[RMDB]
RNA sequence: GGGAACGACUCGAGUAGAGUCGAAAACUAGUUAGACAACAAUGUUCAUGUUUUAGGCUUAGAACAUUAAUAGGAAAUAGUUUUCUUGUGACUAAUGCCAAAUCCACUGAGUCUAAAGUUUAUUACAUUUCCACUUGUCUAAAGAAUUUUUGAGACAAUUACGAUCGGAGUUCGCUCCGAUCGUAAUAAAAGAAACAACAACAACAAC
Reactivity to 2A3 in 0.01 (KOAc 150mM, MgCl2 10mM, bicine 150mM(pH8.5), 24C), signal-to-noise 1, nucleotides 027 to 156: c010u010a020g150u000u010a010g010a010c010a050a000c030a080a050u010g030u000u080c050a030u080g060u020u050u050u100a020g060g000c010u010u000a010g050a090a010c020a080u060u160a020a090u170a170g000g010a010a000a000u040a040g010u040u090u040u050c080u040u170g060u150g040a040c000u010a030a080u130g080c050c060a100a060a070u090c080c000a010c000u040g070a010g010u000c000u000a080a000a000g000u040u090u070a120u110u100a050c020a030u000u000u020c000c000a020c140u020u000g030u010c000u020a000a040a090g040a170a200u040u170u060u020u280g050a030g020a000c000a080